[RMDB]
RNA sequence: GGGAACGACUCGAGUAGAGUCGAAAAGCCAGAUUCGUCUGGCGGGUAUCCUAAGUCACUGGUUUGGUUAACAAUGAUGUUGUCAGCCUCGGAAACGAGGCUUGGAUUUAUUGAGUUAACUGAUCAGUGAUAUGGAGCGAUGAGGCUUCGGCCUCAAACAAUAUCCACAAUUCGUUGUGGAUAUUGUAAAAGAAACAACAACAACAAC
Reactivity to DMS in 0.01 (KOAc 150mM, MgCl2 10mM, bicine 150mM(pH8.5), 24C), signal-to-noise 6, nucleotides 027 to 156: g010c000c000a010g010a070u000u010c300g020u000c000u010g000g010c010g000g010g000u000a050u000c000c010u000a090a300g010u000c010a020c000u010g000g020u000u000u010g100g000u000u000a000a030c010a120a140u010g010a050u000g010u000u010g000u010c040a070g010c000c000u000c000g010g000a180a120a300c020g010a020g000g010c010u000u010g010g000a030u000u000u000a040u010u000g010a300g020u000u000a010a030c000u000g010a020u000c010a020g030u010g000a010u000a160u000g000g000a060g010c110g010a150u010g000a020g020g010c010u000u010c200g030g000c000c000u000c000a010a100
Reactivity to 2A3 in 0.01 (KOAc 150mM, MgCl2 10mM, bicine 150mM(pH8.5), 24C), signal-to-noise 9, nucleotides 027 to 156: g000c000c000a010g010a030u080u150c200g050u010c100u010g010g000c140g030g020g000u130a130u040c010c000u030a100a040g010u000c000a000c000u000g030g060u060u130u300g060g000u000u040a020a000c020a060a100u180g060a030u070g090u240u110g120u180c020a000g000c000c000u000c000g020g020a080a070a060c010g000a010g020g000c010u010u070g010g000a010u020u100u130a060u020u130g040a100g040u000u000a000a000c000u000g010a010u000c000a000g000u000g000a000u000a000u020g010g000a030g040c100g120a150u130g000a010g010g000c020u030u070c230g110g000c000c000u000c000a010a000